[RMDB]
RNA sequence: GGGAACGACUCGAGUAGAGUCGAAAAAUUGAUGAUGAUCCCCAAAGGGAUGCUGCUGCAUGUAAUCGAUGAACGCAGUGGCUACCGACAAAGUGUGAUCGAUAAAGUCAGUGACAGUACCAGCCGAACGAGGGUAAAAUUUCGAUUUUACCCUCGUAAAAGAAACAACAACAACAAC
Reactivity to 2A3 in 0.01 (KOAc 150mM, MgCl2 10mM, bicine 150mM(pH8.5), 24C), signal-to-noise 2, nucleotides 027 to 126: a000u030u030g000a020u010g010a060u070g010a000u020c000c030c010c010a010a030a060g020g040g000a050u170g030c020u000g000c010u000g000c010a080u060g050u250a160a100u110c190g090a130u100g130a060a040c060g000c010a000g010u000g030g000c010u030a010c000c010g000a000c030a000a160a030g080u080g030u060g100a010u060c020g020a010u130a110a070a040g030u000c020a000g040u060g030a040c020a050g000u010a040c010c010a020g110c010c060g000a020
Reactivity to DMS in 0.01 (KOAc 150mM, MgCl2 10mM, bicine 150mM(pH8.5), 24C), signal-to-noise 4, nucleotides 027 to 126: a090u000u000g000a030u000g010a160u020g010a100u000c020c010c010c080a050a120a210g020g000g020a090u030g010c030u000g010c000u020g000c030a070u030g000u000a090a130u000c190g000a090u000g000a130a100c210g000c000a020g040u000g000g000c010u000a140c020c010g000a140c200a050a090a040g020u000g020u010g020a020u000c000g000a060u000a070a120a130g000u000c010a020g010u000g020a070c090a020g000u000a120c040c020a110g010c080c090g020a110
Source: RMDB library OK2TST, as collected in RNAgym. The record gives the reactivity of an RNA of 177 nucleotides to 2A3 and DMS. For 2A3 the reverse transcriptase was SuperScript II with manganese. For 2A3, 1,619 sequencing reads were counted. For DMS, 2,627 sequencing reads were counted. The reactions ran in a buffer of 150 mM KOAc, 10 mM MgCl2 and 150 mM bicine (pH 8.5), at 24 C. For DMS the reverse transcriptase was MarathonRT.